[RMDB]
RNA sequence: GGGAACGACUCGAGUAGAGUCGAAAAUUGGUAACCACGCUUUUGUAAGUCAGCCACGAGAUUGCGUGCAUUAUCGGCAUUUUUCAGUGCCACUAACUGAAUGAUCCACGCGGAAUCUUGGUAUUCAAGGUGAUGGAUGAUUCGUCAUCCAUCACCUAAAAGAAACAACAACAACAAC
Reactivity to 2A3 in 0.01 (KOAc 150mM, MgCl2 10mM, bicine 150mM(pH8.5), 24C), signal-to-noise 2, nucleotides 027 to 126: u080u050g020g030u050a020a020c030c000a030c060g030c040u000u080u090u120g090u270a060a040g040u030c080a020g020c050c000a050c040g020a000g020a060u020u100g040c020g000u010g030c020a010u010u030a080u210c030g010g030c000a000u010u010u010u080u120c120a030g000u000g060c020c000a030c040u060a090a080c030u060g160a090a030u000g000a000u030c040c000a020c010g010c000g040g080a000a000u020c010u020u050g090g010u070a100u100u060c110a000
Reactivity to DMS in 0.01 (KOAc 150mM, MgCl2 10mM, bicine 150mM(pH8.5), 24C), signal-to-noise 3, nucleotides 027 to 126: u010u000g010g020u010a070a140c070c000a070c130g000c030u010u000u000u000g010u020a040a080g030u000c100a110g000c020c030a050c070g020a030g020a050u010u000g010c010g030u000g010c290a120u000u010a010u020c080g010g010c030a020u010u020u060u010u000c180a070g010u000g010c050c060a080c170u020a050a100c160u010g030a080a020u010g000a030u010c140c040a150c040g000c010g010g000a040a030u000c000u000u010g030g000u030a060u010u000c100a090

Structure probing data (2A3 and DMS) for a 177-nucleotide construct.
DMS adducts were read by reverse transcription with MarathonRT.